[RMDB]
RNA sequence: GGGAACGACUCGAGUAGAGUCGAAAACUGUAAGUCGUAUUAGAACUAAAGCGGCUAAUUCAUUACGAAUUAAACCGUUUAAUUGUUUGCCAGAACACAUCGCUAUGGAUGAAUUUAAAAGCGUUAAAAUUGAUCACUGGUUCGCCAGUGAUCAAUUAAAAGAAACAACAACAACAAC
Reactivity to DMS in 0.01 (KOAc 150mM, MgCl2 10mM, bicine 150mM(pH8.5), 24C), signal-to-noise 2, nucleotides 027 to 126: c000u020g030u000a040a150g020u000c010g000u030a060u040u030a140g000a080a030c030u000a130a090a050g000c020g000g000c160u030a010a030u000u000c000a200u040u020a140c240g000a000a010u000u000a050a180a270c030c050g000u000u000u000a100a130u010u010g020u000u000u000g000c030c050a150g000a080a070c120a030c040a050u000c000g020c030u000a050u000g010g010a070u000g020a010a060u060u050u030a010a070a130a030g000c030g010u040u020a040a080
Reactivity to 2A3 in 0.01 (KOAc 150mM, MgCl2 10mM, bicine 150mM(pH8.5), 24C), signal-to-noise 4, nucleotides 027 to 126: c030u080g080u260a080a050g040u060c030g050u140a180u150u100a110g090a140a020c050u030a010a100a000g020c000g000g000c000u000a000a020u000u000c010a010u070u300a060c170g020a000a000u070u000a070a020a080c000c000g000u000u000u130a220a180u130u060g070u060u000u070g090c070c020a040g010a140a010c040a000c000a040u100c020g000c040u070a030u100g020g040a050u100g030a070a140u100u180u240a100a190a040a050g030c020g020u020u070a080a170